[RMDB]
RNA sequence: GGGAACGACUCGAGUAGAGUCGAAAAUCGGUCAACCUCCGAAGUUCCUCUUCUUCCUCCCUGCUGAGGCUCUUUCCUCCGGAGGAGAGCUGCUUUCUCUUGUUCUCCAGGGCCUUCCUUCUUCGGUGGUCCCGCCUCUCCUGUUCGGUGAACCCUCCUAUAUAGCAGAGUUCGCUCUGCUAUAUAGAAAAGAAACAACAACAACAAC
Reactivity to 2A3 in 0.01 (KOAc 150mM, MgCl2 10mM, bicine 150mM(pH8.5), 24C), signal-to-noise 2, nucleotides 027 to 156: u050c020g020g020u050c050a050a040c030c040u040c020c000g020a040a010g060u070u050c040c020u080c050u150u030c000u110u070c030c020u020c010c010c010u050g020c060u050g010a000g040g000c010u030c020u080u150u060c000c020u060c010c030g000g040a030g020g010a020g010a010g000c040u070g020c020u090u210u080c060u000c010u090u100g030u140u040c030u040c020c030a060g010g040g000c010c000u100u150c020c020u060u150c020u120u090c030g000g030u010g020g010u030c000c000c020g020c010c010u040c010u040c000c000u040g090u120u050c000g000g040u050g080a060a060c010c000c000u030c000
Reactivity to DMS in 0.01 (KOAc 150mM, MgCl2 10mM, bicine 150mM(pH8.5), 24C), signal-to-noise 2, nucleotides 027 to 156: u000c020g010g020u000c050a120a140c080c030u000c020c030g010a080a190g000u000u000c020c020u010c050u020u010c040u010u000c020c000u000c030c030c010u000g050c100u020g010a100g020g030c060u000c060u010u000u010c020c020u000c130c090g010g010a130g030g000a030g020a050g000c030u010g010c050u000u010u000c070u000c050u010u010g030u000u000c000u000c010c050a300g000g040g040c010c040u000u000c040c010u000u000c030u000u000c080g010g040u000g000g030u000c020c020c020g030c040c020u000c030u000c030c020u000g020u000u000c070g030g020u010g000a080a150c030c030c020u010c040